[RMDB]
Structure probing data (DMS and 2A3) for a 177-nucleotide construct. For 2A3, 831 sequencing reads were counted. Source: RMDB library M2PK50, as collected in RNAgym. The reactions ran in a buffer of 150 mM KOAc, 10 mM MgCl2 and 150 mM bicine (pH 8.5), at 24 C.
RNA sequence: GGGAACGACUCGAGUAGAGUCGAAAAACGGAUAGAUUCGUCUAUCCGUGCAUCUGAUAACAGACAGAGAAAGUCUGCUAAGAUCUCACUUAGAUAAAGAGAAGAGAGUCGAGUUCGCUCGACUCAAGCGGGUGAUAACAUUCGUGUUAUCACCCGCAAAAGAAACAACAACAACAAC
Reactivity to DMS in 0.01 (KOAc 150mM, MgCl2 10mM, bicine 150mM(pH8.5), 24C), signal-to-noise 1, nucleotides 027 to 126: a010c010g000g000a030u000a020g000a030u000u000c160g020u000c000u000a000u000c000c000g010u000g000c130a080u000c010u000g020a050u000a110a100c000a030g010a050c010a040g020a210g000a090a160a070g000u000c010u000g010c050u000a250a210g000a120u000c010u010c060a090c130u000u000a090g000a100u010a020a050a140g000a090g000a110a110g000a070g010a030g000u000c000g000a000g000u000u010c180g000c000u000c000g000a020c000u010c000a010a060
Reactivity to 2A3 in 0.01 (KOAc 150mM, MgCl2 10mM, bicine 150mM(pH8.5), 24C), signal-to-noise 1, nucleotides 027 to 126: a100c000g000g000a010u010a030g020a010u040u040c120g050u000c120u000a010u000c000c030g000u000g030c010a100u000c030u050g090a030u040a170a060c000a010g040a020c000a000g300a000g140a190a160a010g020u000c000u000g040c010u010a050a140g010a060u030c040u020c020a060c020u090u080a010g050a100u160a280a100a010g100a000g000a120a000g200a000g010a010g060u010c020g010a010g000u030u090c080g010c070u000c000g010a010c010u010c000a020a020